[RMDB]
RNA sequence: GGGAACGACUCGAGUAGAGUCGAAAAAUCGGCCCGUUCGCGGGCCGAUACAGGCGGAGGCUCGCACCUAGCGACCGGCGCAAGGACGCACGGUACUGCGAAUUGACUGUGGAUUCGUCCACAGUAAGCAAGUAGUGUGAUUCGUCACACUACUUGCAAAAGAAACAACAACAACAAC
Reactivity to 2A3 in 0.01 (KOAc 150mM, MgCl2 10mM, bicine 150mM(pH8.5), 24C), signal-to-noise 2, nucleotides 027 to 126: a010u000c010g010g000c020c040c020g010u030u010c170g000c030g060g000g010c000c000g010a000u010a000c020a000g030g010c010g010g060a040g070g060c050u070c080g010c030a010c040c090u030a040g040c020g050a010c000c000g030g000c030g000c040a180a180g160g000a120c010g010c050a160c080g030g050u080a150c050u070g060c000g090a050a090u140u180g050a020c000u010g000u000g000g000a000u030u040c160g050u000c060c000a000c000a000g000u010a000a060
Reactivity to DMS in 0.01 (KOAc 150mM, MgCl2 10mM, bicine 150mM(pH8.5), 24C), signal-to-noise 2, nucleotides 027 to 126: a060u000c000g020g000c020c000c010g060u000u010c180g030c030g050g030g020c000c000g000a000u000a010c170a060g010g000c030g010g020a100g000g020c120u010c030g010c030a150c070c040u000a070g010c030g000a060c050c020g020g010c030g000c030a100a110g020g040a140c030g010c030a070c050g010g010u010a030c050u010g000c010g000a130a100u000u010g010a040c000u000g020u010g000g000a030u000u000c180g000u000c020c000a000c010a010g000u000a020a080
The record gives the reactivity of an RNA of 177 nucleotides to 2A3 and DMS. Values are in units of 0.01, from 0 to 300, in steps of 10. DMS adducts were read by reverse transcription with MarathonRT. It was measured as part of the RMDB library M2PK50.